[RMDB]
Record summary
This 207-nucleotide RNA was probed chemically with DMS and 2A3. For 2A3, 1,631 sequencing reads were counted.
RNA sequence: GGGAACGACUCGAGUAGAGUCGAAAAGCUUCCUCUUGGCGCGGAGGUUUAACUGCGUUCGCUCCCCAUAUCGGUGUGGGCGCACCGGAUUUACAAAUUAAAGUCCUUUAGGGAGCGGAAAGGGACAAAAACUUGCACGUGUUCGCACGUGCAAGAAGAAGUAUUUACGGUUCGCCGUAAAUACUUCAAAAGAAACAACAACAACAAC
Reactivity to DMS in 0.01 (KOAc 150mM, MgCl2 10mM, bicine 150mM(pH8.5), 24C), signal-to-noise 1, nucleotides 027 to 156: g010c060u000u000c030c020u000c030u000u000g030g030c010g030c070g000g020a090g000g000u010u000u030a050a140c000u010g040c030g030u020u010c030g030c010u000c020c000c010c060a170u000a110u000c030g030g010u010g030u000g010g050g010c080g030c010a000c020c010g020g010a280u010u000u000a250c080a040a090a130u000u010a100a080a080g020u000c020c020u000u000u000a050g000g010g000a020g030c000g050g000a020a100a100g010g040g030a080c060a100a100a110a060a160c020u000u000g000c000a000c000g060u050g010u010u000c290g040c000a000c010g040u000g070c000a010a000g010a030a090
Reactivity to 2A3 in 0.01 (KOAc 150mM, MgCl2 10mM, bicine 150mM(pH8.5), 24C), signal-to-noise 2, nucleotides 027 to 156: g030c050u090u000c020c000u030c020u040u080g020g000c010g000c020g010g010a030g000g030u060u190u050a050a020c020u080g010c000g030u000u010c000g020c000u030c000c010c000c030a050u070a130u130c010g030g000u020g010u030g010g000g020c010g000c000a000c010c000g020g010a020u150u240u110a110c190a040a050a000u080u200a100a150a030g010u010c000c040u000u020u050a010g020g000g000a010g020c040g000g000a060a010a010g040g000g050a020c030a020a160a010a000a050c020u010u010g000c000a000c000g000u000g050u070u050c180g030c080a010c000g000u040g000c000a000a000g000a000a000
Reactivities are given for positions 27 through 156.